[RMDB]
RNA sequence: GGGAACGACUCGAGUAGAGUCGAAAAUCCGGUUGGUUCGCCAACCGGAAAAUUUAAAUGGGCGAGCGGCACCGCCCGCCAAAAGACGCGGAAAUGCGUGAAAAACUUAGCAGUUCGCUGCUAAGAAGACCUAAUUCUUGUUCGCAAGAAUUAGGUCAAAAGAAACAACAACAACAAC
Reactivity to DMS in 0.01 (KOAc 150mM, MgCl2 10mM, bicine 150mM(pH8.5), 24C), signal-to-noise 1, nucleotides 027 to 126: u010c000c000g020g000u000u010g000g030u010u030c270g020c010c010a000a030c000c000g020g000a020a000a020a080u000u000u000a040a040a220u010g010g010g040c000g030a030g020c020g000g000c200a070c160c000g010c000c010c000g020c030c030a030a050a100a060g000a080c000g000c000g020g000a100a120a070u020g010c000g000u000g000a060a020a120a100a130c000u000u000a000g010c000a000g000u000u010c300g000c000u000g000c000u010a000a000g020a120a080
Reactivity to 2A3 in 0.01 (KOAc 150mM, MgCl2 10mM, bicine 150mM(pH8.5), 24C), signal-to-noise 1, nucleotides 027 to 126: u010c010c000g000g020u000u000g000g030u010u030c170g040c070c000a000a000c000c000g000g000a000a000a020a000u030u030u040a010a000a000u090g050g000g020c000g010a020g040c080g120g000c090a070c140c070g020c000c000c000g010c010c000a000a070a000a000g130a000c010g000c010g120g100a090a130a090u140g020c000g010u030g050a090a000a000a020a040c010u000u030a000g000c030a000g020u050u050c160g020c140u000g000c010u010a000a010g000a030a020